[RMDB]
RNA sequence: GGGAACGACUCGAGUAGAGUCGAAAAGAUAUGGAGAGUACCCAGGGAGCUGGUCGGAAACGACCCAGCAUCGAUCUGGAACUCUCCUAAGUCAAAACACCUACACUAGUUCGCUAGUGUAGGUGAAGUCAAUCAGUUACUUCGGUAACUGAUUGACAAAAGAAACAACAACAACAAC
Reactivity to 2A3 in 0.01 (KOAc 150mM, MgCl2 10mM, bicine 150mM(pH8.5), 24C), signal-to-noise 2, nucleotides 027 to 126: g010a000u030a040u110g000g000a000g000a000g000u050a150c110c010c020a020g110g140g000a010g030c000u000g020g010u000c010g030g000a070a050a030c020g000a030c050c120c050a000g010c000a190u240c020g080a160u090c010u010g000g000a010a000c010u010c000u000c010c000u010a000a010g000u020c030a000a000a030a210c000a000c000c000u020a010c000a000c000u020a030g040u100u070c300g040c160u000a010g010u010g000u010a010g000g000u010g000a000a010
Reactivity to DMS in 0.01 (KOAc 150mM, MgCl2 10mM, bicine 150mM(pH8.5), 24C), signal-to-noise 2, nucleotides 027 to 126: g000a050u010a280u010g000g000a020g020a000g010u000a050c170c000c020a030g010g030g020a040g000c000u000g010g010u000c000g010g000a090a040a140c020g010a020c110c060c060a010g010c000a080u000c040g000a060u010c000u000g000g000a230a020c000u000c000u000c000c000u000a010a050g020u000c020a140a110a150a150c000a000c000c000u000a000c000a010c010u010a010g000u000u030c190g010c000u000a000g020u000g000u010a000g000g010u010g010a000a050